An RNA of 207 nucleotides, treated with 2A3 and read out base by base.
Conditions: 150 mM KOAc, 10 mM MgCl2 and 150 mM bicine (pH 8.5), 24 C.

RNA sequence: GGGAACGACUCGAGUAGAGUCGAAAAGGGACGCCUUUCGAAGAAGAGGCUAGGUGGUAUUCCGGUGUGGGAUACUUGGUAAUAUGUAACGCUAAUUGCAUAAGAUUGUAGGACGGAAUUUACAGUCAAAACGGUCCUGCGUUCGCGCAGGACCGAAUCAAGGUCUGUAGUUCGCUACAGACCUUGAAAAAGAAACAACAACAACAAC
Reactivity to 2A3 in 0.01 (KOAc 150mM, MgCl2 10mM, bicine 150mM(pH8.5), 24C), signal-to-noise 1, nucleotides 027 to 156: g040g010g000a000c010g000c010c010u040u040u020c120g110a140a100g020a010a040g050a030g020g000c000u020a010g000g110u110g000g040u020a010u000u010c020c020g120g070u210g020u050g030g010g000a010u010a060c030u050u120g020g000u150a120a040u060a060u130g060u060a080a050c010g020c150u100a120a010u110u080g030c010a030u030a100a070g000a030u100u020g010u050a000g000g060a000c070g020g030a050a010u100u170u070a080c030a060g000u040c040a000a020a080a080c000g000g000u020c010c000u000g010c010g000u020u000c180g010c000g010c060a000g000g110a000c000c030g000a000a000